[RMDB]
RNA sequence: GGGAACGACUCGAGUAGAGUCGAAAAGACACACCGUGGUUCUAGAGAUAGAACCGAGCAUGGCUUAUUGAAGUCAUGCAAUGCAUGUUUUAAUCCCUCCAUAGACAUGUACGGUGUGUGGAGGCAAGAUAGUAUUCGAGUUCGCUCGAGUGCUAUCAAAAGAAACAACAACAACAAC
Reactivity to DMS in 0.01 (KOAc 150mM, MgCl2 10mM, bicine 150mM(pH8.5), 24C), signal-to-noise 9, nucleotides 027 to 126: g000a030c010a000c000a000c000c000g010u010g000g010u000u000c000u000a010g010a250g000a200u000a000g000a010a000c000c000g000a250g010c000a000u000g000g000c000u010u000a230u040u050g010a020a010g020u000c000a000u000g000c000a080a040u030g000c000a000u000g010u000u000u010u010a090a160u020c030c010c010u010c050c080a220u020a040g010a010c010a010u000g000u000a020c010g000g000u000g010u000g010u000g000g000a160g010g010c140a100a080
Reactivity to 2A3 in 0.01 (KOAc 150mM, MgCl2 10mM, bicine 150mM(pH8.5), 24C), signal-to-noise 9, nucleotides 027 to 126: g070a000c000a000c000a000c000c000g020u040g000g000u000u000c000u000a020g000a010g000a080u010a020g000a000a000c000c000g000a010g000c000a000u000g010g000c000u050u060a090u180u300g300a050a000g000u000c000a000u000g000c000a000a030u060g000c000a000u010g050u010u040u040u150a120a170u140c030c010c010u060c040c020a080u060a060g020a010c000a000u000g010u040a020c010g000g000u000g000u000g000u010g020g060a050g030g050c030a070a070
Source information:
Chemical mapping of a 177-nucleotide RNA with DMS and 2A3. For 2A3 the reverse transcriptase was SuperScript II with manganese. Source: RMDB library OK1LIB, as collected in RNAgym. The reactions ran in a buffer of 150 mM KOAc, 10 mM MgCl2 and 150 mM bicine (pH 8.5), at 24 C. Reactivities are rounded to 0.1 and cut off at 0 and 3.